The data come from the RNA Mapping Database (RMDB), library 15KREP. The record gives the reactivity of an RNA of 177 nucleotides to 2A3 and DMS.
[RMDB]
RNA sequence: GGGAACGACUCGAGUAGAGUCGAAAAAAGAUCUUCACCAAGAGUGGCGUUAAUGACAUUUGUAUGUUUGAGAAUAAAACCACUUUGCCUACUAAUAUAGCUUUUGAACUCUAUGCUAAGCGUGCUGCAUGAAUCGCUAGUUCGCUAGCGAUUCAUGAAAAGAAACAACAACAACAAC
Reactivity to 2A3 in 0.01 (KOAc 150mM, MgCl2 10mM, bicine 150mM(pH8.5), 24C), signal-to-noise 1, nucleotides 027 to 126: a000a010g030a050u000c040u030u040c020a010c150c030a030a010g020a010g030u000g010g010c070g080u030u090a060a020u130g000a000c000a010u130u180u140g230u210a020u010g000u000u030u060g090a100g090a070a030u180a100a100a000a000c020c010a070c000u030u000u020g010c020c010u040a040c040u010a030a140u270a040u060a100g000c000u050u040u050u060g040a050a010c000u000c010u060a020u090g020c020u050a050a000g050c020g030u000g000c010u040g010
Reactivity to DMS in 0.01 (KOAc 150mM, MgCl2 10mM, bicine 150mM(pH8.5), 24C), signal-to-noise 1, nucleotides 027 to 126: a080a060g020a030u010c050u000u000c080a110c090c050a090a060g000a070g070u000g000g020c200g000u000u020a070a070u010g010a020c010a090u010u010u000g020u010a030u010g010u000u000u000g000a230g000a170a070u020a010a050a080a040c030c030a050c040u000u000u000g010c110c030u010a050c060u010a040a060u010a090u000a050g000c010u010u010u000u000g030a070a060c030u000c020u000a020u000g000c070u000a080a060g000c030g000u000g000c070u000g020
For 2A3 the reverse transcriptase was SuperScript II with manganese.
Values cover nucleotides 27 to 126.